The data come from the RNA Mapping Database (RMDB), libraries RFM100 and RFMREP. Chemical mapping of a 177-nucleotide RNA with 2A3 and DMS. Conditions: 150 mM KOAc, 10 mM MgCl2 and 150 mM bicine (pH 8.5), 24 C. For DMS the reverse transcriptase was MarathonRT.
RNA sequence: GGGAACGACUCGAGUAGAGUCGAAAACUUGCUGUGCGUACGUUGCACACCAAUUAUAGUGGAGCUUUUUGGUUAAGUACUUCCCCCUUGCGAGCAACAGGUGUCGUCCUGUUUGUUAGCCCUGCGCGGAAGUUUUAACAUUCGUGUUAAAACUUCCAAAAGAAACAACAACAACAAC
Reactivity to 2A3 in 0.01 (KOAc 150mM, MgCl2 10mM, bicine 150mM(pH8.5), 24C), signal-to-noise 9, nucleotides 027 to 126: c020u030u090g010c050u050g030u030g030c020g040u090a110c070g130u160u230g000c020a010c000a010c020c000a040a040u170u110a090u110a160g120u090g110g060a060g060c030u050u060u020u080u080g060g020u080u110a070a020g010u030a080c020u030u030c000c000c000c000c000u020u060g010c010g020a030g010c000a000a010c000a010g020g020u130g100u170c050g070u100c010c000u010g000u060u060u020g010u000u000a010g010c000c010c030u100g000c110g010c040
Reactivity to DMS in 0.01 (KOAc 150mM, MgCl2 10mM, bicine 150mM(pH8.5), 24C), signal-to-noise 4, nucleotides 027 to 126: c080u000u010g020c170u000g020u010g010c040g020u020a080c210g030u020u050g020c040a050c030a070c050c040a030a050u010u040a060u010a070g030u010g000g030a070g000c080u000u010u010u010u020g000g010u010u000a050a060g000u010a060c100u000u000c010c010c000c080c070u000u010g010c010g010a060g020c020a030a040c040a020g000g000u010g010u020c140g010u010c020c020u000g000u000u000u000g010u000u000a170g010c020c120c040u000g000c110g010c240